[RMDB]
RNA sequence: GGGAACGACUCGAGUAGAGUCGAAAAGUAUCCCUAGAUGAUAAAACACCGCACAUGGCUCGUAAGAGCGGUUAAAUUAGCAAGUAAUGCGAAUUACGCGAGGUAACGCAUGGCCUAGGCUCGUUAGAAAAGGGAGAAUCCUUCGGGAUUCUCCCAACCAUGGAGCUAACUUCGGUUAGCUCCAUGGAAAAGAAACAACAACAACAAC
Reactivity to DMS in 0.01 (KOAc 150mM, MgCl2 10mM, bicine 150mM(pH8.5), 24C), signal-to-noise 1, nucleotides 027 to 156: g030u020a120u000c010c000c020u030a100g010a130u000g020a210u000a040a130a080a170c050a040c000c030g020c030a140c080a090u000g010g000c000u000c050g000u010a220a210g000a110g000c020g000g010u010u010a020a050a060u000u010a060g010c020a050a080g040u010a090a050u010g010c040g000a110a110u000u000a030c020g000c000g050a070g000g000u020a030a070c020g020c000a030u000g030g060c000c020u010a120g010g000c020u010c080g000u010u000a170g040a040a070a190a150g000g000g010a020g010a030a000u000c000c000u000u030c300g000g040g060a020u000u000c000u000c000c000c000a000a000
Reactivity to 2A3 in 0.01 (KOAc 150mM, MgCl2 10mM, bicine 150mM(pH8.5), 24C), signal-to-noise 1, nucleotides 027 to 156: g010u000a080u100c000c000c020u060a150g070a290u120g040a040u120a050a070a040a000c110a010c000c030g030c020a010c040a140u030g130g020c020u000c080g110u080a060a050g010a050g130c010g000g000u000u020a010a040a030u070u190a000g020c040a000a020g070u100a140a080u050g020c010g060a070a110u100u080a030c070g000c060g020a020g090g100u000a020a020c000g000c010a020u130g080g000c000c000u040a020g000g010c020u000c090g080u050u030a070g140a030a100a020a060g000g010g000a000g000a000a000u000c000c020u010u050c110g040g000g000a000u000u000c010u010c000c000c000a000a000